[RMDB]
RNA sequence: GGGAACGACUCGAGUAGAGUCGAAAAGAUAUGGAUCCUAUGGCCGAGCGAUAAGAGGCAUUCGGAAACGAAUGUCCUCUUUUGACGCUCGGUAGGAUCCUAAGUCAAAGCUCUGCUUCGGCAGAGCCAUGGGGAUAUGGUUCGCCAUAUCCCCAUGAAAAGAAACAACAACAACAAC
Reactivity to 2A3 in 0.01 (KOAc 150mM, MgCl2 10mM, bicine 150mM(pH8.5), 24C), signal-to-noise 4, nucleotides 027 to 126: g030a010u060a010u100g010g010a000u010c010c010u070a220u260g300g000c020c030g010a000g000c030g110a120u070a300a000g000a000g010g020c010a000u000u010c000g000g010a060a020a010c010g010a020a000u010g030u110c000c000u030c000u020u010u000u030g040a060c040g000c000u000c000g000g000u010a000g000g000a000u000c000c000u010a060a020g010u000c050a190a090a010g000c010u000c000u010g030c010u090u120c300g190g000c010a000g000a000g010c010
Reactivity to DMS in 0.01 (KOAc 150mM, MgCl2 10mM, bicine 150mM(pH8.5), 24C), signal-to-noise 6, nucleotides 027 to 126: g000a010u000a200u010g000g000a000u000c000c010u000a110u010g070g020c010c000g010a010g020c000g020a120u010a020a000g000a010g010g010c000a010u000u000c000g020g000a050a040a090c000g010a030a000u000g000u020c000c000u000c000u000u000u010u010g010a250c150g010c000u000c000g010g010u000a000g010g000a010u000c000c000u000a000a080g000u000c010a140a120a190g010c000u000c000u000g010c010u000u010c260g010g000c000a010g000a010g020c010
Structure probing data (2A3 and DMS) for a 177-nucleotide construct. DMS adducts were read by reverse transcription with MarathonRT. Values cover nucleotides 27 to 126. For DMS, 13,901 sequencing reads were counted. The RNA was probed in 150 mM KOAc, 10 mM MgCl2 and 150 mM bicine (pH 8.5) at 24 C.